[RMDB]
RNA sequence: GGGAACGACUCGAGUAGAGUCGAAAAGCUACGUUCGCGUAGCAAGCUAGCGUACUACUUAAAGGGAGUUCAGUGGCUACCCACCGUCUCCCAAAUAGGAGACGAGGCCAUGAACGUUGAUCUUUAAGUAUCGCCCAAAUUGGAGUUCGCUCCAAAACCAUAGCUCAGAUUUCGAUCUGAGCUAUGGAAAAGAAACAACAACAACAAC
Reactivity to DMS in 0.01 (KOAc 150mM, MgCl2 10mM, bicine 150mM(pH8.5), 24C), signal-to-noise 1, nucleotides 027 to 156: g030c030u010a000c000g030u000u010c250g030c030g000u010a090g040c010a060a080g010c090u010a060g000c000g030u000a110c120u000a070c000u000u000a000a010a070g030g000g040a050g000u000u020c000a010g040u010g070g040c070u000a040c020c000c020a300c090c010g020u000c180u030c010c040c010a010a050a120u010a050g010g010a060g010a000c000g000a060g010g040c010c010a020u010g000a020a030c030g010u010u000g010a000u040c000u000u000u000a030a050g010u000a000u000c050g070c000c000c000a040a160a140u010u000g010g030a260g000u000u000c200g040c070u000c010c000a050a030a170a300
Reactivity to 2A3 in 0.01 (KOAc 150mM, MgCl2 10mM, bicine 150mM(pH8.5), 24C), signal-to-noise 4, nucleotides 027 to 156: g000c030u020a010c010g030u060u150c200g000c020g170u030a050g040c030a020a000g080c080u190a010g030c000g080u100a090c060u000a000c000u030u010a000a010a010g020g000g000a040g020u000u000c040a100g150u040g060g000c010u040a100c030c080c060a020c010c010g010u000c030u000c000c020c020a050a100a050u170a030g000g000a000g010a000c000g010a020g000g000c000c000a020u020g000a000a000c000g140u070u010g000a000u000c000u000u000u000a010a010g000u020a010u080c000g030c000c010c000a060a160a090u050u030g000g000a000g000u110u080c120g150c100u040c000c030a010a070a000a010
Chemical mapping of a 207-nucleotide RNA with DMS and 2A3. It was measured as part of the RMDB library RNAMAK. For DMS the reverse transcriptase was MarathonRT.